[RMDB]
Conditions: 150 mM KOAc, 10 mM MgCl2 and 150 mM bicine (pH 8.5), 24 C. This 207-nucleotide RNA was probed chemically with 2A3 and DMS.

RNA sequence: GGGAACGACUCGAGUAGAGUCGAAAAACAUAUUACGAUAUGAUUCAGAUGGUGUCUUACUGGUUCGUACCAAGGGACAUAAUGGUUUCUUGUUUCCAACCAAAGAACAAGUGGCGAGCCUGAAUCAAAAACUGACUGCCGUUCGCGGCAGUCAGAAGCUAUAAGGUGAGUUCGCUCACCUUAUAGCAAAAGAAACAACAACAACAAC
Reactivity to 2A3 in 0.01 (KOAc 150mM, MgCl2 10mM, bicine 150mM(pH8.5), 24C), signal-to-noise 4, nucleotides 027 to 156: a000c070a040u300a090u210u250a120c100g070a050u050a040u210g020a010u020u010c020a020g070a110u140g100g100u060g030u110c030u040u100a110c040u040g020g010u010u100c070g060u060a060c030c010a020a020g010g010g010a000c020a020u220a090a160u160g090g000u000u000u010c000u010u010g010u020u050u010c010c030a030a050c010c000a040a200a020g020a040a050c050a070a030g040u040g100g050c020g010a030g080c010c010u020g010a010a010u020c010a010a060a000a080a050c000u000g000a000c000u010g000c010c020g040u040u050c250g000c000g130g010c000a000g000u010c000a000g000a000a000
Reactivity to DMS in 0.01 (KOAc 150mM, MgCl2 10mM, bicine 150mM(pH8.5), 24C), signal-to-noise 1, nucleotides 027 to 156: a100c040a130u000a090u010u000a050c050g000a230u010a110u000g000a060u000u000c040a030g020a040u010g050g020u000g000u000c020u000u010a190c080u000g060g020u020u010c160g010u000a090c110c000a000a150g000g010g000a010c020a050u010a090a130u010g010g070u000u000u000c030u000u000g000u000u000u000c040c020a050a190c100c130a050a060a120g030a030a060c060a060a060g010u000g000g020c030g020a270g010c070c000u000g000a060a020u000c000a060a020a040a110a100c010u000g000a010c010u000g010c000c030g050u000u020c190g050c100g000g010c000a000g000u000c010a020g000a020a090